The data come from the RNA Mapping Database (RMDB), library OK3TST. Chemical mapping of a 207-nucleotide RNA with 2A3.
RNA sequence: GGGAACGACUCGAGUAGAGUCGAAAAGGCCUUGGCUGUCCUAGGUCUGGUUCAGAGGGGCCCAGGUGUGGCUUAGGCUACUGCUGAGUACUCAAAUGGUAAACCUUGGCAGCGUCUAUAUGGUGCUAAUUCUGCAGGCUCACAGGAUGAAAGAGCAUACGUCGGAAAAUUUCGAUUUUCCGACGUAAAAAGAAACAACAACAACAAC
Reactivity to 2A3 in 0.01 (KOAc 150mM, MgCl2 10mM, bicine 150mM(pH8.5), 24C), signal-to-noise 2, nucleotides 027 to 156: g010g000c020c000u020u020g030g000c020u010g080u210c010c020u000a010g020g010u000c010u060g130g000u120u220c100a040g070a050g140g060g010g000c000c020c010a020g020g000u150g090u200g060g070c010u000u060a030g000g020c040u040a040c010u020g030c000u020g030a020g060u090a130c000u040c130a040a200a130u200g020g000u090a050a090a110c020c000u010u070g020g020c010a010g000c020g030u040c040u040a130u000a050u280g040g010u020g020c000u000a040a040u080u060c030u040g020c020a060g050g000c020u000c020a040c020a060g070g010a020u140g110a110a030a020g060a010g000c030a030